Chemical mapping of a 177-nucleotide RNA with 2A3 and DMS. It was measured as part of the RMDB library OK1LIB. For DMS, 18,886 sequencing reads were counted. 2A3 adducts were read by reverse transcription with SuperScript II with manganese. The reactions ran in a buffer of 150 mM KOAc, 10 mM MgCl2 and 150 mM bicine (pH 8.5), at 24 C. For 2A3, 7,730 sequencing reads were counted. DMS adducts were read by reverse transcription with MarathonRT.
RNA sequence: GGGAACGACUCGAGUAGAGUCGAAAAGGUGAGCUGGACGGGAAGUAGGUCCAGCGACUGCUUCCGAAGCUUUGAUAAGAGCAACUCCAUCUACGUUGCUGAAGUAGGUGGUAGCAGCAAACACCGAAAUGCAUGACUAGUUCGCUAGUCAUGCAUUAAAAGAAACAACAACAACAAC
Reactivity to 2A3 in 0.01 (KOAc 150mM, MgCl2 10mM, bicine 150mM(pH8.5), 24C), signal-to-noise 8, nucleotides 027 to 126: g000g000u010g010a040g000c000u020g000g020a010c030g100g050g100a120a100g090u220a060g050g080u010c000c000a000g000c010g000a020c000u000g010c000u040u000c010c020g030a090a000g010c000u060u070u090g170a210u250a200a130g020a010g050c010a000a030c010u030c050c010a090u030c040u050a060c080g110u110u110g090c130u130g060a100a020g000u010a010g000g080u070g010g000u010a010g000c010a000g000c010a030a060a040c020a010c000c000g010a030
Reactivity to DMS in 0.01 (KOAc 150mM, MgCl2 10mM, bicine 150mM(pH8.5), 24C), signal-to-noise 8, nucleotides 027 to 126: g000g010u000g000a120g010c010u000g010g000a060c040g010g020g010a090a130g020u020a100g010g000u000c000c010a030g010c030g000a100c010u000g010c000u000u000c020c020g000a300a160g000c000u000u000u020g000a160u040a170a110g020a020g020c010a020a050c040u020c200c120a110u030c180u030a080c170g000u010u030g010c070u000g000a020a060g000u000a010g000g020u040g000g010u010a020g020c020a010g000c110a070a060a300c010a010c010c000g010a100